[RMDB]
RNA sequence: GGGAACGACUCGAGUAGAGUCGAAAAGCAGUAAUUGAUAAUUAAACACAGCUCUGGUUUUUACCAUGCAAUCUAGUAGAACACCUAGACAUCAGGAACUCCUUAUCUUUGGUUAUUUAUACAAUAAUGAAAUCUGUAGUUCACGCUAGGCUGUGUAGGUAAAAUUAGCAUUCGUGCUAAUUUUACCAAAAGAAACAACAACAACAAC
Reactivity to DMS in 0.01 (KOAc 150mM, MgCl2 10mM, bicine 150mM(pH8.5), 24C), signal-to-noise 1, nucleotides 027 to 156: g050c030a180g000u010a050a130u000u000g010a130u000a100a110u000u010a050a070a110c010a050c020a030g010c020u010c050u000g030g010u000u000u000u000u000a060c030c030a100u000g000c010a070a090u000c050u010a030g010u000a040g010a110a080c090a080c110c020u000a050g010a060c050a140u000c120a140g000g000a050a040c000u010c090c010u000u000a040u000c060u000u010u010g010g020u000u000a010u020u010u000a110u000a230c050a050a050u000a020a070u000g010a020a060a050u000c020u000g000u000a050g000u000u000c020a050c070g050c060u000a060g030g010c000u000g030u000g030u010a040
Reactivity to 2A3 in 0.01 (KOAc 150mM, MgCl2 10mM, bicine 150mM(pH8.5), 24C), signal-to-noise 4, nucleotides 027 to 156: g040c030a020g050u210a130a110u150u150g080a080u090a260a080u170u140a090a200a000c000a000c000a000g020c020u040c050u210g030g040u100u100u090u070u140a060c040c020a050u110g030c000a040a090u020c010u020a010g010u050a060g150a290a020c020a040c100c000u000a000g060a040c020a050u120c050a060g090g030a020a030c010u020c000c000u070u100a060u110c020u040u100u050g040g000u020u020a060u070u100u060a300u110a110c040a020a030u040a040a020u080g040a070a050a030u020c010u010g020u020a020g010u040u010c020a010c100g010c020u010a010g010g000c000u000g000u020g020u030a080

Source: RMDB library OK3TST, as collected in RNAgym. Structure probing data (DMS and 2A3) for a 207-nucleotide construct. The DMS profile rests on 2,627 reads.